[RMDB]
The record gives the reactivity of an RNA of 207 nucleotides to DMS and 2A3. It was measured as part of the RMDB library OK3TST. Values cover nucleotides 27 to 156. The 2A3 profile rests on 2,093 reads. The RNA was probed in 150 mM KOAc, 10 mM MgCl2 and 150 mM bicine (pH 8.5) at 24 C. For 2A3 the reverse transcriptase was SuperScript II with manganese.
RNA sequence: GGGAACGACUCGAGUAGAGUCGAAAACAUGGUAUGGUCAGACGAAAUGGUGAAGACGGGAGAGGCCCAGAUUCAUGCCCACCUUGUCCGGCCCUAUGUGGGCAUUCAUCUGCGCAUUGGCUCUGACUGGGUAACUUCCCCCUUCCUCUCUCACUGGACAACCAUUGGAAUUCGUUCCAAUGGUUGUAAAAGAAACAACAACAACAAC
Reactivity to DMS in 0.01 (KOAc 150mM, MgCl2 10mM, bicine 150mM(pH8.5), 24C), signal-to-noise 2, nucleotides 027 to 156: c090a120u000g020g000u020a080u000g020g030u000c020a070g010a110c050g020a090a130a140u020g010g020u000g010a070a100g010a090c030g010g000g020a100g000a070g010g010c000c020c010a050g000a160u000u020c110a070u000g000c010c000c010a030c010c130u000u000g000u000c050c000g010g010c020c040c030u000a050u000g030u010g000g020g000c000a050u000u000c010a060u000c050u010g030c100g040c080a130u020u000g010g030c070u000c010u000g000a110c000u000g010g080g040u010a040a100c050u000u000c010c010c000c000c010u000u000c010c020u000c010u000c020u000c020a100c070u010g020g000
Reactivity to 2A3 in 0.01 (KOAc 150mM, MgCl2 10mM, bicine 150mM(pH8.5), 24C), signal-to-noise 3, nucleotides 027 to 156: c070a100u240g050g060u170a060u120g000g010u010c010a010g020a040c040g090a090a090a120u180g020g010u070g010a040a040g040a010c090g000g010g000a020g000a020g050g030c000c050c010a010g000a010u060u040c040a010u010g000c000c000c000a020c000c020u060u080g070u110c070c070g070g080c090c010c000u110a090u120g030u010g000g000g000c000a000u000u020c000a030u000c000u050g000c020g000c060a070u080u150g100g020c070u000c020u020g040a060c040u020g000g090g000u110a130a050c070u050u050c000c010c010c000c020u040u000c000c010u010c000u000c000u020c000a030c060u080g020g020